[RMDB]
RNA sequence: GGGAACGACUCGAGUAGAGUCGAAAAAGCCAGGUGGUAUUUAGCAAUCUGAUGGGUUUGUUAUUGAGAAGAGAGGUAAGGGCUGAAUACAUAUAGAUUUGGGAAUCGCAGCUUAGAUGGGAUCACCCUACUUAACACACUUCGGUGUGUUAAGUAGAAAAGAAACAACAACAACAAC
Reactivity to DMS in 0.01 (KOAc 150mM, MgCl2 10mM, bicine 150mM(pH8.5), 24C), signal-to-noise 6, nucleotides 027 to 126: a100g020c050c020a050g010g020u010g010g010u000a050u010u010u010a080g010c060a070a070u000c060u000g020a120u010g010g000g010u000u000u010g010u010u000a090u010u000g010a120g010a090a070g010a080g010a070g010g010u010a060a080g000g000g010c090u010g000a070a050u000a060c100a070u010a140u000a100g000a110u000u000u000g010g000g010a100a060u010c080g010c060a050g000c070u000u000a060g000a080u010g000g010g010a120u010c080a080c080c060
Reactivity to 2A3 in 0.01 (KOAc 150mM, MgCl2 10mM, bicine 150mM(pH8.5), 24C), signal-to-noise 3, nucleotides 027 to 126: a000g040c040c000a010g000g050u060g040g000u070a070u080u120u090a030g020c010a030a060u050c040u090g070a090u090g040g000g070u020u110u050g030u070u060a120u090u190g040a110g030a110a050g030a030g020a020g030g030u040a020a050g030g000g000c010u020g000a050a040u070a080c040a000u200a010u050a120g140a110u080u100u100g030g000g040a060a010u070c070g020c110a020g000c010u070u080a040g010a110u070g000g000g020a000u020c020a120c010c010
Source: RMDB library OK2TRN, as collected in RNAgym.
Structure probing data (DMS and 2A3) for a 177-nucleotide construct.
The 2A3 profile rests on 3,432 reads.
Conditions: 150 mM KOAc, 10 mM MgCl2 and 150 mM bicine (pH 8.5), 24 C.
DMS adducts were read by reverse transcription with MarathonRT.